[RMDB]
RNA sequence: GGGAACGACUCGAGUAGAGUCGAAAAGAUAUGGACGGUCGAAGAGCAACAGCCCACUGACGUCGGAAACGACGUUUGGGACAUGCUUUAGACCGUCCUAAGUCAAAGGCUCGGUUCGCCGAGCCAACCAAGAUAUUUUCUUCGGAAAAUAUCUUGGAAAAGAAACAACAACAACAAC
Reactivity to 2A3 in 0.01 (KOAc 150mM, MgCl2 10mM, bicine 150mM(pH8.5), 24C), signal-to-noise 2, nucleotides 027 to 126: g010a000u040a010u080g020g010a000c010g010g010u000c020g050a120a050g020a060g070c030a050a160c070a260g080c000c030c000a070c150u100g030a010c000g010u000c010g000g030a050a040a020c000g000a000c010g000u020u020u020g000g010g030a030c070a250u300g000c000u160u090u000a010g000a000c000c000g000u000c000c000u010a000a000g000u000c010a030a020a170g000g010c000u000c010g020g040u070u060c220g000c090c010g000a000g000c000c000a010a000
Reactivity to DMS in 0.01 (KOAc 150mM, MgCl2 10mM, bicine 150mM(pH8.5), 24C), signal-to-noise 4, nucleotides 027 to 126: g000a050u010a300u010g020g000a020c010g020g000u000c000g000a160a200g000a010g020c000a090a080c290a150g010c000c000c000a080c300u010g010a000c000g020u000c000g030g000a080a080a190c010g020a010c000g000u000u000u000g000g000g000a030c040a260u000g010c000u000u000u000a300g010a000c010c000g000u000c000c000u000a010a080g020u000c010a120a130a140g010g000c000u000c000g010g000u000u020c260g020c000c000g010a010g010c000c000a010a040